[RMDB]
RNA sequence: GGGAACGACUCGAGUAGAGUCGAAAAAUACACCAGCAGUAGGACUCAGCGACCGUCACAACAAGGUUGUGCUGGUAUCCGACGGUCGUAUAGCCCUGUCUUGCAGGUUGCCUUGCACUGACGUGGCACACCAUUUACAGAUUCGUCUGUAAAUGAAGUACAUAACGGCUUUCGAGCCGUUAUGUACAAAAGAAACAACAACAACAAC
Reactivity to 2A3 in 0.01 (KOAc 150mM, MgCl2 10mM, bicine 150mM(pH8.5), 24C), signal-to-noise 3, nucleotides 027 to 156: a000u130a030c040a010c020c000a000g030c010a010g020u150a020g010g050a040c030u060c120a020g000c000g020a000c000c000g000u010c010a050c030a210a100c040a160a130g020g000u020u020g020u030g010c020u010g000g000u010a030u030c020c030g000a000c010g000g030u000c000g000u030a030u110a050g040c000c000c000u030g040u040c030u020u100g000c010a020g020g000u090u110g040c030c010u030u070g060c060a060c120u120g050a030c020g030u080g010g000c020a020c010a010c030c010a000u010u000u000a000c010a000g010a030u010u140c170g080u010c130u020g000u020a010a010a000u010g030a070a030
Reactivity to DMS in 0.01 (KOAc 150mM, MgCl2 10mM, bicine 150mM(pH8.5), 24C), signal-to-noise 1, nucleotides 027 to 156: a140u020a100c100a250c010c000a070g000c010a030g010u000a020g020g030a040c010u000c180a220g040c010g040a020c020c010g010u010c030a230c110a140a090c080a130a140g000g030u000u000g010u030g010c010u010g000g000u000a040u000c050c070g000a020c020g000g000u000c020g040u000a080u020a030g020c030c000c010u000g000u000c050u000u000g020c070a120g030g020u010u000g010c020c120u020u000g010c080a190c080u020g000a030c140g020u030g000g080c090a070c070a160c040c000a010u010u010u000a030c010a000g000a060u000u000c300g020u000c020u000g000u000a010a000a010u000g000a060a110